[RMDB]
RNA sequence: GGGAACGACUCGAGUAGAGUCGAAAAGCGUACUACUCUCUCGCCUAGGGACAUGCUUUAUCAAAGUCGAUUCCCAAAUAGGAAUCGAACCAAGUAAAGCAACAGCCCUAGGGUGGAGAGAGUAUCGCAAACUAGCUUAACUUCGGUUAAGCUAGAAGACAUAUCGUUCCUUCGGGAACGAUAUGUCAAAAGAAACAACAACAACAAC
Reactivity to 2A3 in 0.01 (KOAc 150mM, MgCl2 10mM, bicine 150mM(pH8.5), 24C), signal-to-noise 3, nucleotides 027 to 156: g000c000g050u120a040c010u010a020c000u010c000u000c020u000c060g080c040c010u000a030g010g000g020a120c060a170u070g010c000u100u010u020a120u300c050a170a030a020g010u000c000g000a000u000u010c010c000c000a200a170a000u300a070g000g000a000a000u000c000g010a040a100c010c000a130a010g020u000a010a000a010g000c000a030a020c070a090g080c000c000c000u010a010g000g000g010u220g120g010a000g000a010g000a010g000u000a000u000c010g030c000a000a000a110c000u000a000g020c010u000u000a020a010c010u000u050c150g050g000u000u000a000a000g050c000u000a010g000a000a000
An RNA of 207 nucleotides, treated with 2A3 and read out base by base. The data come from the RNA Mapping Database (RMDB), library RNAMAK.